An RNA of 177 nucleotides, treated with DMS and 2A3 and read out base by base. The RNA was probed in 150 mM KOAc, 10 mM MgCl2 and 150 mM bicine (pH 8.5) at 24 C. It was measured as part of the RMDB library OK2TRN.
[RMDB]
RNA sequence: GGGAACGACUCGAGUAGAGUCGAAAAUGAGAUUGCACCAGGCCACCCUGGCCUGAUUGGGCACCCAGGAAGAGGGUGACUGAGAUUGGACCAGGCCGCCCUGGCCUGAUUGAGCACCUCGGCCAGGCAUGGAGAAUCCUUUCGAGGAUUCUCCAUGAAAAGAAACAACAACAACAAC
Reactivity to DMS in 0.01 (KOAc 150mM, MgCl2 10mM, bicine 150mM(pH8.5), 24C), signal-to-noise 4, nucleotides 027 to 126: u010g010a060g010a080u010u000g030c030a130c090c020a040g010g010c010c020a070c210c010c020u000g010g010c000c000u010g000a030u000u000g000g010g010c030a030c020c010c010a120g030g040a110a130g030a160g010g000g000u000g010a020c020u000g000a130g020a090u000u010g010g000a040c010c010a030g000g000c200c100g000c160c110c110u010g020g010c000c000u000g010a050u000u000g000a120g000c040a050c120c000u000c020g010g000c010c010a080g010g010
Reactivity to 2A3 in 0.01 (KOAc 150mM, MgCl2 10mM, bicine 150mM(pH8.5), 24C), signal-to-noise 2, nucleotides 027 to 126: u100g010a030g030a030u000u140g020c020a030c020c000a020g010g000c020c010a080c040c020c000u000g010g000c000c000u000g000a010u000u000g000g010g000c010a010c010c010c000a020g170g140a150a080g180a080g090g000g010u010g020a050c020u040g030a040g040a120u080u140g060g000a110c010c000a000g000g000c040c040g080c060c040c030u020g000g000c000c000u040g010a050u020u140g040a000g000c000a030c000c010u010c000g000g040c010c000a050g020g030